Structure probing data (DMS) for a 177-nucleotide construct. The RNA was probed in 150 mM KOAc, 10 mM MgCl2 and 150 mM bicine (pH 8.5) at 24 C. The DMS profile rests on 1,382 reads.

RNA sequence: GGGAACGACUCGAGUAGAGUCGAAAACGCAGGGUUGUCAUUGAUGAGGCUCCUUCACUCCCACCUCAUCUGCUCCUGUUGCACAUGCAGCGGGCCUCAUCAGUUCACCUCCUCGGUGAUCCUAACCUCAAAGCUAGUUCUUCGGAACUAGCUUUGAAAAAGAAACAACAACAACAAC
Reactivity to DMS in 0.01 (KOAc 150mM, MgCl2 10mM, bicine 150mM(pH8.5), 24C), signal-to-noise 2, nucleotides 027 to 126: c080g030c170a100g010g010g010u010u000g020u000c120a050u000u000g000a010u000g000a030g000g000c020u010c020c070u000u010c080a120c080u010c040c000c010a120c110c060u010c050a040u000c110u020g010c040u000c080c050u010g020u000u000g030c050a130c170a090u010g000c070a040g000c140g050g030g010c020c010u000c000a000u010c010a000g020u010u010c040a050c010c030u000c060c050u000c080g020g020u000g000a110u010c020c010u010a080a100c130c090